[RMDB]
RNA sequence: GGGAACGACUCGAGUAGAGUCGAAAAACGGCCAGUACGCUGGCCGAAUGCACAAUACAGUGUUUAUGCGGUUACCCACCGCGUAGAGCAUAGAACGCUCAAACAACAAAGGAGAAAAACAAAUGAAGGGUGGAACGGAAUUCGUUCCGUUCCACCCAAAAGAAACAACAACAACAAC
Reactivity to 2A3 in 0.01 (KOAc 150mM, MgCl2 10mM, bicine 150mM(pH8.5), 24C), signal-to-noise 1, nucleotides 027 to 126: a000c000g010g070c000c000a000g000u050a000c300g050c100u000g000g000c030c000g000a000a000u010g000c000a010c040a010a130u160a180c140a140g000u000g000u000u050u060a000u030g000c000g000g040u000u060a040c000c000c000a000c000c000g000c000g000u000a010g000a030g000c000a000u060a180g250a010a030c060g030c000u040c020a000a130a000c120a000a000c050a040a210a000g080g000a260g140a050a170a000a030a000c050a090a000a140u300g000a110a120
Notes:
The record gives the reactivity of an RNA of 177 nucleotides to 2A3. Reactivities are given for positions 27 through 126.